[RMDB]
RNA sequence: GGGAACGACUCGAGUAGAGUCGAAAAGAAGUCCGAUUGAAUUCAAGGACAAGCUCGUUCUACAGGUCGGGUCCGAUGUAGUUCGAGCGAUUAGUCUUGACAAGCCUGUGCUGGUGUCUUGACGAGAGGGAUGGUGCACCUUCGGGUGUACCAUCCCAAAAGAAACAACAACAACAAC
Reactivity to DMS in 0.01 (KOAc 150mM, MgCl2 10mM, bicine 150mM(pH8.5), 24C), signal-to-noise 2, nucleotides 027 to 126: g000a080a120g000u020c050c010g010a240u020u020g040a190a040u020u030c150a020a050g030g000a030c000a120a100g000c000u000c000g000u000u000c000u000a000c010a020g000g020u000c040g000g000g000u000c030c020g000a110u000g000u000a000g010u010u000c000g000a040g010c010g020a070u010u030a080g000u000c010u000u010g000a010c070a150a040g000c020c030u000g000u020g000c020u000g000g000u010g050u000c000u000u000g020a080c040g000a060g020a140
Reactivity to 2A3 in 0.01 (KOAc 150mM, MgCl2 10mM, bicine 150mM(pH8.5), 24C), signal-to-noise 1, nucleotides 027 to 126: g140a140a010g000u000c000c000g000a040u010u110g080a130a300u090u080c100a070a150g060g040a010c000a040a000g050c000u000c030g050u010u000c000u000a010c040a000g230g140u180c000g100g000g030u000c050c000g000a010u040g000u000a000g000u030u000c000g000a000g000c000g000a040u030u060a000g000u000c000u000u020g000a000c000a020a010g020c010c030u060g020u050g020c050u070g000g040u000g000u020c000u020u000g000a040c000g000a010g010a050